RNA sequence: GGGAACGACUCGAGUAGAGUCGAAAAAAGUUUGGAAACCAAAUUUGUAAAGAACAACAAUAAUGCACUAAUGAAGCUGAUGAACUGUGUUUUCUAUAUUUGCCUAUGUUGCCCAUGGUGCGUGCAUUACAAAUCGCUUGAAAACUUUCUCAGUAAAGAAGUGAUGCGUAUUCGUACGCAUCACUUCAAAAGAAACAACAACAACAAC
Reactivity to 2A3 in 0.01 (KOAc 150mM, MgCl2 10mM, bicine 150mM(pH8.5), 24C), signal-to-noise 1, nucleotides 027 to 156: a000a000g070u140u060u000g010g000a130a050a020c060c000a070a050a050u110u120u050g030u070a040a150a040g090a030a000c020a050a000c000a050a000u140a090a020u290g000c070a010c000u120a140a090u110g120a130a030g000c010u050g030a070u080g010a050a000c020u060g000u000g140u120u160u100u050c000u030a060u000a070u160u060u090g000c000c000u090a070u020g010u060u080g120c020c000c000a050u060g070g070u050g010c000g000u000g000c000a000u000u020a020c010a010a170a030u050c050g010c060u070u050g130a130a000a000a000c000u080u080u000c020u050c060a090g010u030a010a120a000
Source: RMDB library OK3TST, as collected in RNAgym. The record gives the reactivity of an RNA of 207 nucleotides to 2A3. For 2A3, 405 sequencing reads were counted.